Chemical mapping of a 177-nucleotide RNA with DMS and 2A3.
RNA sequence: GGGAACGACUCGAGUAGAGUCGAAAAACUGGUCCAAUGAAUCAGAGACCUGCUAACUUCCUGGAUCCCUCCUUGCCCUGGUAAGGAGAAUGAAACUCAGAAUUGAACAAUCUUUGCUGUAAGUAGCAUUGUACGGAUUGUUCGCAAUCCGUACAAUAAAAGAAACAACAACAACAAC
Reactivity to DMS in 0.01 (KOAc 150mM, MgCl2 10mM, bicine 150mM(pH8.5), 24C), signal-to-noise 3, nucleotides 027 to 126: a060c030u010g010g000u000c020c030a180a150u010g030a140a070u000c090a070g000a180g000a160c020c030u010g000c090u010a050a100c150u010u000c060c010u000g020g020a100u000c060c190c000u010c000c020u010u020g010c010c010c170u010g010g010u010a000a010g000g000a030g000a080a030u000g000a040a090a120c080u010c060a030g000a130a060u010u010g010a060a040c140a080a080u010c020u000u010u000g030c010u020g070u010a030a090g010u010a030g010c030
Reactivity to 2A3 in 0.01 (KOAc 150mM, MgCl2 10mM, bicine 150mM(pH8.5), 24C), signal-to-noise 2, nucleotides 027 to 126: a000c060u010g000g020u000c040c030a110a190u280g110a120a060u180c080a030g110a030g030a220c010c000u010g000c040u040a070a060c030u070u000c010c020u000g100g020a090u060c040c010c000u000c010c010u000u000g000c030c010c120u180g040g000u020a020a010g010g040a010g000a030a000u060g030a070a040a030c080u050c120a090g150a170a160u120u160g040a090a030c030a140a070u040c050u060u110u040g020c040u010g070u070a130a140g060u040a020g060c020
Values cover nucleotides 27 to 126. For 2A3, 1,385 sequencing reads were counted. It was measured as part of the RMDB library OK2TRN.